[RMDB]
RNA sequence: GGGAACGACUCGAGUAGAGUCGAAAAAUGCCAGUUUAAGUUCAUCUUGUUAUUCUUUCAGGAACUUGUACUUUCCUUCCUUUUAGAGAAACAUUAAUUCAUGCUGUCUCUACUGUUCAAUUUAAUGAGAUCAAACUUAAUGAAUUUCAUAUGUAUAAGAACGAUACCAAUUCGUUGGUAUCGUUCUAAAAGAAACAACAACAACAAC
Reactivity to 2A3 in 0.01 (KOAc 150mM, MgCl2 10mM, bicine 150mM(pH8.5), 24C), signal-to-noise 3, nucleotides 027 to 156: a000u140g020c030c010a010g010u020u070u040a050a010g000u020u040c010a060u040c140u050u040g080u050u130a180u140u100c120u150u140u130c040a020g010g020a030a030c000u000u050g030u070a120c010u030u060u020c000c000u000u080c010c020u100u090u050u110a040g020a030g010a040a050a030c020a050u060u140a160a030u120u180c040a010u040g060c030u050g050u050c000u000c000u050a080c040u100g100u080u090c050a070a070u060u050u230a090a080u060g000a020g000a030u040c060a040a070a090c030u050u120a020a050u090g070a040a050u060u080u070c050a030u060a040u250g110u090a110u100a170
Reactivity to DMS in 0.01 (KOAc 150mM, MgCl2 10mM, bicine 150mM(pH8.5), 24C), signal-to-noise 1, nucleotides 027 to 156: a090u010g000c080c040a150g020u000u010u020a030a060g010u000u030c080a050u010c020u010u000g030u000u000a060u000u000c110u010u010u000c140a100g000g000a040a050c100u000u000g030u020a040c070u000u000u000c030c010u000u010c050c050u000u000u010u000a050g010a070g000a120a090a030c000a030u010u000a020a180u020u000c260a120u000g030c000u000g000u000c000u000c000u000a060c110u000g000u040u000c070a050a080u000u000u000a040a020u000g000a030g000a010u000c050a070a030a060c050u010u010a020a090u000g010a100a100u000u000u000c020a070u010a110u000g020u000a100u000a140
The record gives the reactivity of an RNA of 207 nucleotides to 2A3 and DMS. Reactivities are given for positions 27 through 156. The DMS profile rests on 2,452 reads. It was measured as part of the RMDB library OK3TST. The reactions ran in a buffer of 150 mM KOAc, 10 mM MgCl2 and 150 mM bicine (pH 8.5), at 24 C.